[RMDB]
RNA sequence: GGGAACGACUCGAGUAGAGUCGAAAAGUCUGUGCGUUUCCAUUUGAGUAUCCUGAAAACGUGCUUUUCAGCAUGGAACGUACAUAUUAAAUAGUAGGAGUGCAUAGUGGCCCGUAUAGCAGGCAUUGAGGCGAGGAUUGUUUCGACAAUCCUCGAAUCAAUAUGCAGCUUUCGAGCUGCAUAUUGAAAAAGAAACAACAACAACAAC
Reactivity to 2A3 in 0.01 (KOAc 150mM, MgCl2 10mM, bicine 150mM(pH8.5), 24C), signal-to-noise 6, nucleotides 027 to 156: g060u020c060u020g000u010g000c010g020u010u150u070c020c000a050u120u070u130g070a080g080u190a130u170c010c020u010g010a010a010a010a000c130g150u150g160c110u020u020u010u020c020a040g000c010a020u010g000g000a000a000c000g000u010a000c000a000u010a010u010u110a050a050a060u100a020g070u030a030g010g060a030g010u040g010c030a030u050a100g050u050g080g010c010c020c020g020u060a040u050a070g010c040a030g040g010c020a020u030u140g050a040g060g030c010g000a000g010g010a000u010u000g030u020u090u090c120g020a000c000a000a010u000c000c010u000c000g000a010a010
Reactivity to DMS in 0.01 (KOAc 150mM, MgCl2 10mM, bicine 150mM(pH8.5), 24C), signal-to-noise 4, nucleotides 027 to 156: g020u000c080u010g030u000g010c010g000u000u000u000c010c020a120u010u000u000g020a200g030u000a100u000c120c020u000g000a040a020a040a050c070g020u000g010c090u000u010u000u000c060a040g040c120a060u000g020g010a030a030c010g030u010a020c020a050u000a050u000u000a060a070a140u000a100g010u000a070g000g000a070g010u000g010c040a100u000a090g020u000g010g000c020c030c020g000u010a090u000a080g010c040a060g010g020c040a100u000u000g010a110g020g010c000g010a030g010g000a030u000u000g020u000u000u000c280g010a070c010a020a020u000c010c000u000c000g000a010a060

Chemical mapping of a 207-nucleotide RNA with 2A3 and DMS. The DMS profile rests on 14,696 reads. The 2A3 profile rests on 6,180 reads. 2A3 adducts were read by reverse transcription with SuperScript II with manganese.